[RMDB]
RNA sequence: GGGAACGACUCGAGUAGAGUCGAAAAGUCAUGAGGCACAUAUGACCUUGUAAAAAACACUCAAACCACAUUCUUAGGAGGCUGUGUUCAGCACUCCUUAUCACACAUACUACUCCCUGUCCUGUUUUCAGGGACAAGGAGUUCUAGUCUCAUGCAAGUAUACGCAGUCAUUCGUGACUGCGUAUACAAAAGAAACAACAACAACAAC
Reactivity to DMS in 0.01 (KOAc 150mM, MgCl2 10mM, bicine 150mM(pH8.5), 24C), signal-to-noise 1, nucleotides 027 to 156: g000u000c020a010u000g000a060g020g000c000a110c120a150u010a080u020g010a090c060c020u000u000g040u010a000a060a120a110a090a090c040a070c030u010c060a100a100a150c040c030a030c030a200u000u000c100u010u000a010g010g010a050g040g000c010u000g040u000g000u000u000c000a070g010c050a140c000u000c000c010u010u000a020u000c050a110c060a100c030a000u020a040c050u000a050c000u000c000c000c020u010g050u010c000c000u000g020u010u000u000u010c300a160g000g000g020a010c000a010a000g000g000a060g000u000u000c020u000a040g010u000c020u000c020a030u020g000c010a100a160
Reactivity to 2A3 in 0.01 (KOAc 150mM, MgCl2 10mM, bicine 150mM(pH8.5), 24C), signal-to-noise 5, nucleotides 027 to 156: g070u080c010a020u000g000a000g020g030c030a040c040a080u150a100u110g100a130c010c050u070u060g030u150a010a080a060a020a050a030c110a070c030u180c100a120a160a080c090c070a070c040a160u220u130c080u160u140a000g020g000a000g000g000c000u010g070u070g140u300u160c020a010g000c020a070c150u020c000c000u000u010a050u060c020a050c000a000c020a060u070a130c020u020a000c000u020c000c000c000u000g010u010c000c000u020g130u070u120u170u300c130a110g010g010g000a000c000a000a000g010g000a000g000u000u010c000u000a000g000u010c000u000c000a010u020g010c020a120a000

About this RNA:
The record gives the reactivity of an RNA of 207 nucleotides to DMS and 2A3. The 2A3 profile rests on 2,423 reads. The reactions ran in a buffer of 150 mM KOAc, 10 mM MgCl2 and 150 mM bicine (pH 8.5), at 24 C. It was measured as part of the RMDB library OK3TST.